[RMDB]
RNA sequence: GGGAACGACUCGAGUAGAGUCGAAAAGGAAAGAUGGUAACAUCAAAGACACAACAGCAAAGUGUCAAGCUGAAAGACGUGGAACUGGCUAAUAAAAUUGGCCGGAUCAUACCACGAUGAAAAAAAAGUAAACAAUCAGGUUCGCCUGAUUGUUUACAAAAGAAACAACAACAACAAC
Reactivity to DMS in 0.01 (KOAc 150mM, MgCl2 10mM, bicine 150mM(pH8.5), 24C), signal-to-noise 2, nucleotides 027 to 126: g020g040a130a110a100g010a070u000g000g020u000a120a170c020a030u000c010a100a080a220g000a020c050a000c010a110a130c100a190g000c090a050a200a210g000u000g010u000c010a140a030g000c070u000g000a100a060a060g000a090c020g000u000g010g020a090a100c010u010g050g000c010u000a010a000u020a020a050a020a300u000u000g000g040c000c000g000g000a080u000c070a100u000a100c000c000a010c000g000a110u000g000a000a000a030a020a110a030a050a170
Reactivity to 2A3 in 0.01 (KOAc 150mM, MgCl2 10mM, bicine 150mM(pH8.5), 24C), signal-to-noise 2, nucleotides 027 to 126: g190g000a140a050a060g030a040u040g010g050u090a060a060c000a020u020c000a000a090a020g000a010c000a000c000a030a230c050a050g200c130a100a130a090g030u010g000u000c040a010a020g070c050u070g040a090a110a040g050a040c000g000u000g000g000a030a030c020u020g010g000c010u020a020a030u100a080a280a040a100u040u030g010g000c070c000g000g000a060u060c020a040u070a120c010c010a000c020g060a080u150g080a110a000a000a000a000a020a000a000